Description:
An RNA of 177 nucleotides, treated with DMS and 2A3 and read out base by base. The reactions ran in a buffer of 150 mM KOAc, 10 mM MgCl2 and 150 mM bicine (pH 8.5), at 24 C. It was measured as part of the RMDB libraries RFM100 and RFMREP. High DMS reactivity at an A or C suggests that its Watson-Crick edge is free. For 2A3 the reverse transcriptase was SuperScript II with manganese.
[RMDB]
RNA sequence: GGGAACGACUCGAGUAGAGUCGAAAAUAGGAUAGGUCGCAGUGGCAAGGGGACCCCGACUGUUUACCAAAAACACAGACCGCUGCUAGUCCGUAAGGAUGUGUAUAGCGGCCGAAACCUGCCCAGUCUACAUUCAAUAAUUCGUUAUUGAAUGUAGAAAAGAAACAACAACAACAAC
Reactivity to DMS in 0.01 (KOAc 150mM, MgCl2 10mM, bicine 150mM(pH8.5), 24C), signal-to-noise 8, nucleotides 027 to 126: u020a030g010g020a060u010a200g010g040u010c070g020c020a110g030u010g010g010c040a070a080g000g010g000g010a220c050c020c020c010g010a110c100u010g020u000u000u000a120c170c180a060a050a050a050a070c110a060c110a090g010a130c020c020g000c030u000g000c010u000a220g020u000c010c010g000u040a090a090g000g000a050u000g010u010g010u020a110u020a110g000c000g000g000c010c010g000a050a090a060c020c010u000g000c010c000c010a150g000u000
Reactivity to 2A3 in 0.01 (KOAc 150mM, MgCl2 10mM, bicine 150mM(pH8.5), 24C), signal-to-noise 9, nucleotides 027 to 126: u210a010g010g020a010u020a050g010g000u010c010g000c020a020g030u040g050g020c070a110a110g030g010g030g100a120c030c030c010c010g040a050c050u040g050u060u070u120a140c050c040a070a070a020a050a000c060a010c010a020g090a090c010c030g020c030u010g000c000u010a040g050u010c010c020g020u050a040a080g010g000a020u030g030u000g000u060a020u050a220g010c000g000g010c000c000g030a090a050a020c000c000u030g010c010c000c000a000g020u000